[RMDB]
RNA sequence: GGGAACGACUCGAGUAGAGUCGAAAAGAAGAGGAAAGAAGGACUCGGACGCGAACCCGUGAGUGGAAACCUCGUUCUUUAUUGGGGAGUACACUCGAGGAGUGGAAGGCGGGGAGGGCGGGGAGGAAGGGUAGGUAGUUCGCUACCUACAAAAGAAACAACAACAACAAC
Reactivity to DMS in 0.01 (KOAc 150mM, MgCl2 10mM, bicine 150mM(pH8.5), 24C), signal-to-noise 9, nucleotides 027 to 129: g030a030a050g020a070g040g020a050a000a030g000a050a020g010g000a060c060u030c100g030g010a090c110g010c110g050a080a100c070c020c020g020u040g020a000g000u030g010g030a090a140a150c020c010u010c110g000u010u010c160u050u060u050a060u070u050g020g000g010g000a080g020u020a090c030a000c000u020c020g030a050g010g010a050g030u010g020g020a060a070g010g050c150g000g000g000g000a100g020g000g000c140g020g020g010g010a050g020g000a200a050g020g020
Reactivity to 2A3 in 0.01 (KOAc 150mM, MgCl2 10mM, bicine 150mM(pH8.5), 24C), signal-to-noise 3, nucleotides 027 to 129: g050a000a010g040a020g030g030a040a020a040g030a020a020g020g000a020c010u010c030g010g020a020c040g020c040g060a050a060c010c010c010g050u100g040a010g000u030g010g000a030a010a020c010c010u070c070g120u240u090c100u140u300u150a230u140u190g000g000g000g000a000g000u010a010c010a010c000u000c000g020a050g020g010a030g010u090g010g040a080a020g030g020c110g010g010g000g030a190g020g020g030c100g000g010g000g010a020g020g020a040a060g080g020